[RMDB]
RNA sequence: GGGAACGACUCGAGUAGAGUCGAAAAUUAAACGCAACGACUCGAGUAGAGUCGAAAACUAAACGACUCGAGUAGAGUCGAAAACCCAACGACUCGAGUAGAGUCGAAGCGAACGCAAGCGAAAAAACAUAGUUGACAGAUUCGUCUGUCAACUAUGAAAAGAAACAACAACAACAAC
Reactivity to DMS in 0.01 (KOAc 150mM, MgCl2 10mM, bicine 150mM(pH8.5), 24C), signal-to-noise 2, nucleotides 027 to 126: u000u000a070a120a170c090g020c050a030a190c010g000a000c000u010c010g000a080g000u000a040g010a030g020u000c000g000a020a030a060a050c030u000a010a020a060c000g010a000c000u000c000g000a040g000u000a040g000a000g000u000c000g000a010a050a060a010c000c000c000a120a210c000g000a000c000u000c000g000a140g000u010a050g000a000g020u000c000g000a020a190g010c010g010a110a080c150g020c180a090a120g010c110g000a000a040a060a040a050a090
Reactivity to 2A3 in 0.01 (KOAc 150mM, MgCl2 10mM, bicine 150mM(pH8.5), 24C), signal-to-noise 2, nucleotides 027 to 126: u050u030a070a080a030c300g000c300a000a000c000g000a000c000u000c000g010a010g050u060a020g040a000g000u000c010g010a000a000a000a000c070u070a080a000a000c000g000a000c000u000c000g000a010g040u040a010g020a000g000u000c000g000a000a000a000a000c000c000c000a000a020c000g000a000c000u000c010g020a050g130u140a030g070a000g000u010c000g000a020a010g010c010g030a070a020c090g020c140a050a050g080c040g140a130a020a000a000a010a000